[RMDB]
RNA sequence: GGGAACGACUCGAGUAGAGUCGAAAAUGUCGGCAAGCUCUAUAUAUGGACACUUACGAAGGGUUUUGGUUGUUUUGUAUGUCAAGCCGACUUUGAGUAUUUGAGGAAAAUACGACAGAAAAAACAAAUAGACCGGUAUCCUUCGGGAUACCGGUAAUCUAAGAUCUAUGUUCGCAUAGAUCUUAGAAAAAGAAACAACAACAACAAC
Reactivity to DMS in 0.01 (KOAc 150mM, MgCl2 10mM, bicine 150mM(pH8.5), 24C), signal-to-noise 2, nucleotides 027 to 156: u000g010u000c020g050g030c010a180a160g020c050u010c040u000a110u010a140u000a110u000g020g000a080c000a020c040u000u010a100c080g010a120a050g010g010g010u000u000u000u020g020g010u010u000g000u000u000u000u010g020u000a070u010g020u000c060a050a180g020c010c000g020a060c010u000u000u000g020a270g000u000a040u000u000u010g000a200g020g010a150a040a030a030u010a030c030g010a170c050a150g020a000a050a090a040a080a120c030a060a070a120u010a100g020a080c000c010g030g010u000a010u000c000c000u000u000c300g020g020g000a010u000a010c000c000g000g000u000a000a060
Reactivity to 2A3 in 0.01 (KOAc 150mM, MgCl2 10mM, bicine 150mM(pH8.5), 24C), signal-to-noise 1, nucleotides 027 to 156: u070g000u010c010g000g000c020a000a030g020c060u060c060u060a110u050a090u010a040u270g110g040a010c020a010c050u160u190a060c120g060a070a050g030g050g010u020u050u060u090g070g000u000u060g020u020u080u040u030g020u040a140u050g050u030c020a100a000g000c000c000g000a000c000u010u030u040g020a000g000u020a010u010u050u060g100a120g000g160a060a060a000a020u020a020c000g040a020c050a020g130a040a070a000a010a030a000c070a020a090a040u050a020g050a020c000c000g000g010u000a000u000c000c000u040u030c200g000g000g000a000u000a000c000c000g000g010u010a000a000